[RMDB]
RNA sequence: GGGAACGACUCGAGUAGAGUCGAAAACAACUGUUAUCUUGCCACUGCAUUGUUAACACUACAACAAAUAGAGUUGAAGUUUAAUCCACCUGCUCUACAAAGGGCUGGUGAAGCUGCUAACUUUUGUCAACCACCUCGUUCGCGAGGUGGAAAAGAAACAACAACAACAAC
Reactivity to 2A3 in 0.01 (KOAc 150mM, MgCl2 10mM, bicine 150mM(pH8.5), 24C), signal-to-noise 5, nucleotides 027 to 129: c030a000a040c020u010g020u040u040a120u080c080u030u110g020c030c030a120c080u140g030c030a040u090u060g060u060u060a030a020c040a040c050u170a040c020a100a000c030a010a200a100u260a080g080a020g070u010u020g020a080a020g010u050u050u040a020a030u060c030c000a020c000c030u010g000c020u000c000u020a100c080a020a250a140g000g000g000c000u020g000g000u000g000a020a020g010c020u020g010c000u060a010a040c000u000u020u050u090g020u030c010a020a020
Reactivity to DMS in 0.01 (KOAc 150mM, MgCl2 10mM, bicine 150mM(pH8.5), 24C), signal-to-noise 2, nucleotides 027 to 129: c090a020a120c070u050g030u000u000a040u060c100u000u060g000c020c190a120c110u050g100c160a040u040u000g020u080u050a050a070c110a110c080u130a140c080a070a040c090a080a040a080u100a050g070a070g020u040u040g010a040a040g030u090u000u000a010a100u060c000c020a000c010c000u020g020c020u000c030u080a190c300a000a000a000g010g000g030c050u000g060g000u000g020a040a030g040c000u050g010c000u030a030a050c050u020u040u020u000g000u010c120a040a080
Chemical mapping of a 170-nucleotide RNA with 2A3 and DMS. The data come from the RNA Mapping Database (RMDB), library 15KLIB. The DMS profile rests on 4,632 reads. Reactivities are given for positions 27 through 129. High 2A3 reactivity points to a flexible backbone, as in loops and unpaired stretches. The reactions ran in a buffer of 150 mM KOAc, 10 mM MgCl2 and 150 mM bicine (pH 8.5), at 24 C.